The record gives the reactivity of an RNA of 177 nucleotides to 2A3 and DMS. DMS adducts were read by reverse transcription with MarathonRT. It was measured as part of the RMDB library OK1LIB. Values cover nucleotides 27 to 126. Conditions: 150 mM KOAc, 10 mM MgCl2 and 150 mM bicine (pH 8.5), 24 C. DMS (dimethyl sulfate) methylates the pairing face of unpaired adenines and cytosines.
RNA sequence: GGGAACGACUCGAGUAGAGUCGAAAAGAUAGUCGAAGAAAACCCGGGGAAAGCGCGCGGAAACAGUAAUCUGGAAUAUACGAAACCCGGGGAAAGUAUAUGAAAACGCGCGCGAAAGACUAUCGAAGGGAUAACAUAAGUUCGCUUAUGUUAUCCCAAAAGAAACAACAACAACAAC
Reactivity to 2A3 in 0.01 (KOAc 150mM, MgCl2 10mM, bicine 150mM(pH8.5), 24C), signal-to-noise 2, nucleotides 027 to 126: g000a010u000a010g010u000c020g010a040a050g090a090a270a050a050c000c010c000g000g000g000g060a170a180a090g000c000g050c010g000c010g030g080a170a080a000c020a030g080u200a110a140u170c040u060g000g010a030a010u030a020u000a020c020g000a020a080a070c010c000c040g010g000g010g000a010a040a070g000u000a000u000a010u090g080a110a000a000a000c020g000c000g010c000g010c000g000a000a010a000g000a000c000u000a000u010c000g000a030a010
Reactivity to DMS in 0.01 (KOAc 150mM, MgCl2 10mM, bicine 150mM(pH8.5), 24C), signal-to-noise 2, nucleotides 027 to 126: g000a000u000a000g000u000c000g010a140a160g000a110a070a190a180c000c010c000g000g000g000g010a060a090a130g020c010g010c010g020c010g000g000a160a090a110c030a010g000u000a050a140u050c010u010g040g000a130a080u000a020u000a010c000g000a190a180a100c000c000c000g000g030g000g010a020a040a130g010u010a010u000a040u010g010a090a120a140a220c000g000c010g000c000g040c000g000a010a070a140g000a000c000u000a000u000c000g010a200a190